[RMDB]
RNA sequence: GGGAACGACUCGAGUAGAGUCGAAAAGAAAGAAAGAAGCUGAGGAAGACUGAAGGGAGCUUUCUUUUGACAGUUCGAUUUCGAACUCUUACUGUCAUGGAGGCGCUCUCUUCAGGUGAACUCUGAAUCCCUAAGAUCAAUUCGUUGAUCUUAGGGAAAAAGAAACAACAACAACAAC
Reactivity to DMS in 0.01 (KOAc 150mM, MgCl2 10mM, bicine 150mM(pH8.5), 24C), signal-to-noise 9, nucleotides 027 to 126: g010a070a070a080g010a060a090a100g000a100a090g010c060u010g000a030g000g010a180a180g010a090c000u010g000a030a010g000g010g010a010g010c000u000u030u000c000u010u000u010u000g000a010c010a010g010u000u000c050g000a020u010u000u030c300g000a110a160c300u010c000u000u000a000c000u000g000u000c010a010u000g000g000a020g010g010c300g000c000u010c000u000c000u000u000c000a000g000g000u010g010a240a180c040u000c000u000g010a130a120
Reactivity to 2A3 in 0.01 (KOAc 150mM, MgCl2 10mM, bicine 150mM(pH8.5), 24C), signal-to-noise 8, nucleotides 027 to 126: g060a010a050a010g100a020a080a010g100a050a020g040c090u060g020a010g020g080a090a060g080a090c010u000g000a000a000g010g000g010a000g000c000u150u110u020c000u050u260u060u050g000a000c010a000g010u030u000c010g020a050u080u100u240c160g050a090a060c040u000c000u000u010a000c000u000g000u010c000a020u050g040g020a000g020g030c080g000c040u000c000u010c000u000u000c000a000g000g000u020g000a020a000c000u000c000u010g040a040a050
This 177-nucleotide RNA was probed chemically with DMS and 2A3. The reactions ran in a buffer of 150 mM KOAc, 10 mM MgCl2 and 150 mM bicine (pH 8.5), at 24 C. Reactivities are given for positions 27 through 126.